[RMDB]
RNA sequence: GGGAACGACUCGAGUAGAGUCGAAAAAUUGUUCUCCUGGCUUUUUCAUAUGUUACAGGAGUUCCACAGGAAUUAACUAGAUGUUUUACAGGUGGAUCAGUAGUACGUCAGCAUUGGAGCAAAAAUGGAUAAGGUUGUUAUUCGUAACAACCUUAUCAAAAGAAACAACAACAACAAC
Reactivity to DMS in 0.01 (KOAc 150mM, MgCl2 10mM, bicine 150mM(pH8.5), 24C), signal-to-noise 6, nucleotides 027 to 126: a080u010u010g010u010u010c010u010c010c020u000g000g020c030u000u000u010u020u010c110a080u000a020u000g000u000u010a130c010a040g010g010a070g000u000u000c010c020a070c100a090g000g010a100a080u010u000a040a070c050u000a100g010a100u010g010u000u000u010u010a100c090a080g010g030u000g010g000a050u000c060a070g010u000a040g010u000a040c080g010u000c080a040g010c030a080u000u000g010g010a070g010c100a020a050a050a100a070u010g000
Reactivity to 2A3 in 0.01 (KOAc 150mM, MgCl2 10mM, bicine 150mM(pH8.5), 24C), signal-to-noise 4, nucleotides 027 to 126: a000u080u120g010u050u030c010u000c000c010u010g080g010c050u150u120u080u240u050c070a110u220a040u300g070u110u110a080c010a010g010g020a010g010u000u020c040c010a030c010a030g080g110a080a090u140u030a120a020c030u050a090g030a200u090g080u030u070u030u090a050c030a030g000g100u030g040g020a040u060c020a010g060u100a020g020u040a030c060g040u020c030a000g020c000a010u040u110g030g030a040g000c050a000a040a080a050a060u160g050